[RMDB]
RNA sequence: GGGAACGACUCGAGUAGAGUCGAAAACAUGUCUACUGGAAUCUAACACUCCAGUAGCAGAAUUGUUAGGUCUGAAUAUAUGGGUAUUCAUUGAUGUUAUGGGAAAGGAAUCGGAGAGUGAGCAAUUCUGCAGUACCAUUCAUGUAGCAAAAGUGUGUACACAUCUGGUAUUCGUACCAGAUGUGUAAAAAGAAACAACAACAACAAC
Reactivity to DMS in 0.01 (KOAc 150mM, MgCl2 10mM, bicine 150mM(pH8.5), 24C), signal-to-noise 4, nucleotides 027 to 156: c050a090u000g010u000c010u000a010c010u000g010g000a060a080u000c040u010a160a210c230a150c060u000c000c000a010g030u000a020g020c010a060g010a080a100u000u000g030u000u000a080g030g010u000c050u010g010a060a070u000a100u010a090u010g020g020g020u000a050u000u030c060a090u000u000g000a150u000g030u000u000a050u000g010g010g000a080a090a110g030g000a070a070u000c070g020g030a130g000a080g000u000g020a110g000c060a050a080u000u010c020u000g020c050a100g030u000a120c030c030a060u010u000c050a080u000g020u000a060g010c060a040a040a070a110g020u000g000u000g010
Reactivity to 2A3 in 0.01 (KOAc 150mM, MgCl2 10mM, bicine 150mM(pH8.5), 24C), signal-to-noise 7, nucleotides 027 to 156: c020a040u080g030u070c010u000a010c000u000g010g030a060a060u080c090u120a250a070c050a010c080u000c000c000a000g000u010a010g000c000a000g010a040a060u080u050g060u050u090a030g040g040u010c040u060g070a070a010u090a020u040a060u160g080g030g000u050a050u020u070c060a030u050u140g050a030u050g050u140u120a040u100g020g000g050a050a060a050g060g020a030a040u050c030g030g040a040g010a020g000u090g020a040g000c010a010a040u080u000c020u060g000c010a020g030u030a040c030c010a010u050u090c020a020u110g070u130a030g060c060a030a060a050a040g120u150g030u100g030
Notes: Chemical mapping of a 207-nucleotide RNA with DMS and 2A3. It was measured as part of the RMDB library OK3TST. For DMS, 9,610 sequencing reads were counted.